[RMDB]
RNA sequence: GGGAACGACUCGAGUAGAGUCGAAAAUUAUAUGUCCAAGUAGGAGAGCCCAACGCGGAUCACCGAUGCUGGGAGAGGCCAGAAGACAUGGAUACACCUCGCAACGUUUACAAAGUGUCUACACAGAACCUCCCCAUUAAUUCGUUAAUGGGGAGGUAAAAGAAACAACAACAACAAC
Reactivity to DMS in 0.01 (KOAc 150mM, MgCl2 10mM, bicine 150mM(pH8.5), 24C), signal-to-noise 4, nucleotides 027 to 126: u010u020a100u020a070u000g000u010c010c010a040a130g020u000a090g000g000a090g010a190g010c010c000c030a050a060c070g000c060g000g010a200u020c300a140c030c030g020a050u000g020c030u000g010g010g000a080g000a090g010g000c030c010a070g000a080a090g000a070c030a020u000g000g000a080u000a090c110a110c020c010u000c060g000c100a050a070c090g000u010u020u010a060c100a040a080a070g020u000g000u010c040u000a080c120a070c090a100g000a100
Reactivity to 2A3 in 0.01 (KOAc 150mM, MgCl2 10mM, bicine 150mM(pH8.5), 24C), signal-to-noise 2, nucleotides 027 to 126: u110u030a070u000a020u300g060u000c010c000a000a000g080u100a040g140g050a060g010a060g100c020c000c000a040a020c020g010c020g030g050a050u090c060a030c150c030g060a070u050g020c020u020g000g030g010a090g020a000g060g030c020c000a010g010a040a010g030a010c030a010u030g080g010a040u100a070c040a050c010c020u020c020g000c040a060a080c090g020u070u160u150a110c090a050a070a020g010u040g060u020c050u110a040c070a010c040a050g040a010